The record gives the reactivity of an RNA of 207 nucleotides to 2A3. The reactions ran in a buffer of 150 mM KOAc, 10 mM MgCl2 and 150 mM bicine (pH 8.5), at 24 C.
RNA sequence: GGGAACGACUCGAGUAGAGUCGAAAAGUUUUUUUACUACUUCUACAACGCCGUCUGCAAUACCACGCUCUAUCGCGAGCGGCGUGUGCCCUGCAUCAUCUGUGUGGGCUCUCCCACUCAGACGGAGGCCUUAGAGAGUCGCUACGAUCACAUCACCAGGUCGUGUAGUAUUCGUACUACACGACCUAAAAGAAACAACAACAACAAC
Reactivity to 2A3 in 0.01 (KOAc 150mM, MgCl2 10mM, bicine 150mM(pH8.5), 24C), signal-to-noise 2, nucleotides 027 to 156: g020u060u020u000u010u000u090u210a110c000u010a020c010u140u020c000u070a050c040a070a030c020g020c020c000g030u110c030u010g010c040a070a090u060a130c030c080a110c140g050c000u040c050u000a090u170c120g020c070g030a010g000c020g020g020c050g000u020g000u060g000c000c010c020u040g070c010a080u100c000a010u000c220u020g040u000g010u010g010g000g030c030u020c050u050c060c000c000a000c000u030c000a010g000a030c010g020g010a050g030g000c000c000u070u070a110g020a000g000a000g070u020c020g020c050u070a090c050g050a050u090c030a060c030a090u050c020a020c140c000
Values are in units of 0.01, from 0 to 300, in steps of 10. As a SHAPE reagent, 2A3 marks flexible, mostly unpaired nucleotides at the ribose 2'-OH. 2A3 adducts were read by reverse transcription with SuperScript II with manganese.